RNA sequence: GGGAACGACUCGAGUAGAGUCGAAAAGCGAGUCGUUGAGCAAUCACUUGAGAACUCUGAUGAGGUAUUGUAGCAUCGGGUUACGGUAGCCGAGUCAGUUGAUUCUCAUCAUGUGGCACUUCGACGGGAAAUUAUUGAAGUUCGCUUCAAUAAUUUCAAAAGAAACAACAACAACAAC
Reactivity to 2A3 in 0.01 (KOAc 150mM, MgCl2 10mM, bicine 150mM(pH8.5), 24C), signal-to-noise 6, nucleotides 027 to 126: g110c030g030a040g010u000c000g010u010u010g010a010g010c020a030a110u200c000a020c040u040u040g010a010g000a030a010c000u010c000u020g000a020u020g010a000g040g000u020a010u020u040g000u010a010g010c020a050u240c230g300g140g000u010u010a000c010g000g050u030a040g300c000c000g000a010g010u000c010a010g020u090u030g030a150u010u000c010u000c010a000u020c010a010u110g010u020g050g000c030a010c060u020u030c010g010a010c010g030g070
Reactivity to DMS in 0.01 (KOAc 150mM, MgCl2 10mM, bicine 150mM(pH8.5), 24C), signal-to-noise 6, nucleotides 027 to 126: g000c080g010a080g010u000c010g020u000u000g010a070g030c050a130a080u010c040a070c040u000u000g000a020g010a020a030c020u000c010u000g000a020u000g000a300g000g010u000a010u000u000g000u000a020g000c010a300u020c250g000g010g010u000u000a010c010g010g010u000a030g030c010c000g000a280g000u000c010a010g010u010u000g000a160u000u000c010u000c010a020u010c130a060u010g020u010g010g010c060a050c050u000u000c010g010a040c050g010g000